[RMDB]
RNA sequence: GGGAACGACUCGAGUAGAGUCGAAAACUCAGUUCCCAGAUCCUGUGGUCAGGAUAGCUUGUCUCAGAGUAGCAGGACAAGCCGCAGACAAAACCCCUCAGACUCUGAGUUAAAGAAGGAAGGGCUUUAUUCAGCCGGGAGCUUAGGCAAGACUCAAUAUAAUAGUGCGAUUCGUCGCACUAUUAUAAAAAGAAACAACAACAACAAC
Reactivity to 2A3 in 0.01 (KOAc 150mM, MgCl2 10mM, bicine 150mM(pH8.5), 24C), signal-to-noise 1, nucleotides 027 to 156: c030u090c050a000g000u000u000c020c000c000a000g050a040u080c020c000u030g020u060g110g090u210c010a030g000g000a030u000a000g030c000u000u060g030u010c010u020c090a050g070a050g240u110a070g060c050a060g020g010a080c000a020a020g000c000c020g170c110a060g040a210c060a060a200a070a060c000c050c000c000u040c020a040g020a110c020u000c030u110g040a040g020u030u090a040a050a050g100a050a000g070g020a000a060g040g040g000c020u070u080u110a130u120u150c090a000g000c010c020g020g020g000a000g000c000u050u060a000g000g030c000a000a000g020a040c050u010c140a050a010
Reactivity to DMS in 0.01 (KOAc 150mM, MgCl2 10mM, bicine 150mM(pH8.5), 24C), signal-to-noise 2, nucleotides 027 to 156: c030u000c020a110g010u000u000c000c000c000a210g000a010u010c010c010u010g030u000g020g020u000c050a050g000g000a130u000a040g000c010u000u000g010u000c010u000c040a170g010a200g000u010a200g010c060a130g030g000a030c010a020a070g020c020c060g110c120a150g020a110c070a120a090a090a140c050c010c020c030u000c040a210g000a180c040u010c010u020g010a090g020u000u010a030a070a100g020a070a140g020g070a070a050g010g020g020c020u000u000u000a070u000u000c070a140g000c000c040g000g000g000a050g010c070u000u000a010g010g000c010a060a110g010a160c030u020c000a040a300
An RNA of 207 nucleotides, treated with 2A3 and DMS and read out base by base. Source: RMDB library OK3TST, as collected in RNAgym. The reactions ran in a buffer of 150 mM KOAc, 10 mM MgCl2 and 150 mM bicine (pH 8.5), at 24 C.